[RMDB]
RNA sequence: GGGAACGACUCGAGUAGAGUCGAAAAUUAAAGAGCGUAGCACACACUCAGACUAAGUCUGACACACACAUACGCUAAUCAUCUCUGUGUGUGUUCGAGAUAUCGAUAACUGUAUGAGAUGAAAAAACUGUGAAUGAAGAUUCGUCUUCAUUCACAGAAAAGAAACAACAACAACAAC
Reactivity to 2A3 in 0.01 (KOAc 150mM, MgCl2 10mM, bicine 150mM(pH8.5), 24C), signal-to-noise 3, nucleotides 027 to 126: u160u090a090a060a040g090a010g000c030g010u030a000g010c050a010c000a000c000a000c060u040c020a010g010a020c040u170a240a100g020u000c010u020g010a000c010a000c000a000c010a000c010a050u030a030c020g030c080u050a070a060u030c010a020u010c020u000c020u020g010u000g020u010g000u000g010u060u020c010g010a020g030a110u180a070u160c040g010a020u040a130a060c020u030g040u090a060u070g000a000g000a000u000g000a150a040a010a010a020a030
Reactivity to DMS in 0.01 (KOAc 150mM, MgCl2 10mM, bicine 150mM(pH8.5), 24C), signal-to-noise 4, nucleotides 027 to 126: u010u010a080a140a140g000a110g000c020g010u000a040g010c100a070c060a070c150a080c190u000c020a030g000a040c040u010a100a150g010u000c010u000g000a020c050a020c010a030c010a000c000a090u000a010c050g000c030u000a110a080u000c020a010u000c000u000c030u000g020u000g010u000g010u010g010u010u000c040g010a040g010a150u020a070u000c020g010a010u000a070a140c220u000g000u000a040u000g010a020g000a010u010g000a000a060a070a070a060a130

Conditions: 150 mM KOAc, 10 mM MgCl2 and 150 mM bicine (pH 8.5), 24 C.
An RNA of 177 nucleotides, treated with 2A3 and DMS and read out base by base.
For DMS the reverse transcriptase was MarathonRT.
For 2A3, 4,430 sequencing reads were counted.
It was measured as part of the RMDB library M2PK90.